[RMDB]
RNA sequence: GGGAACGACUCGAGUAGAGUCGAAAAUGACUGUGGGUUACAGAACCGAUUCCUCCCAUGUCAGGAGGUGCUGCCCUGGGGUGGAGUGGCACAGAGGGGGCUGUGCUAGUCUCAAGGGAGAAGGAGGUCCACGGCAUCCUUCCUGUCCCCUGGAAAAUAAUUAUAAAUGCUUCGGCAUUUAUAAUUAAAAAGAAACAACAACAACAAC
Reactivity to 2A3 in 0.01 (KOAc 150mM, MgCl2 10mM, bicine 150mM(pH8.5), 24C), signal-to-noise 2, nucleotides 027 to 156: u060g060a060c010u000g010u030g080g000g000u120u130a080c070a120g080a120a060c020c020g010a040u050u040c010c000u020c020c040c000a050u150g140u130c070a030g020g030a020g030g040u100g060c090u100g000c000c020c000u040g000g000g040g000u090g030g040a070g030u040g020g000c020a000c000a000g050a160g030g010g000g000g030c000u010g000u000g000c000u020a080g090u040c010u010c030a090a090g010g020g000a060g020a010a020g030g020a050g010g010u010c020c010a000c010g020g020c020a030u020c000c040u040u060c000c010u040g080u090c010c000c000c000u000g060g010a060a000a030a080
Reactivity to DMS in 0.01 (KOAc 150mM, MgCl2 10mM, bicine 150mM(pH8.5), 24C), signal-to-noise 1, nucleotides 027 to 156: u000g020a090c020u010g010u020g020g000g030u000u000a240c150a150g010a080a110c010c010g000a300u010u000c000c000u010c000c010c020a080u000g010u000c110a040g030g010a050g010g000u010g010c140u010g010c050c110c000u000g020g030g070g070u010g040g020a070g020u020g020g030c000a000c010a040g010a230g000g000g000g050g000c050u020g000u000g000c010u010a090g010u010c020u030c050a060a090g040g000g000a100g000a060a040g000g010a300g020g000u000c010c020a090c070g020g010c000a120u010c010c060u020u000c010c030u000g010u000c020c000c010c020u000g010g010a090a050a080a170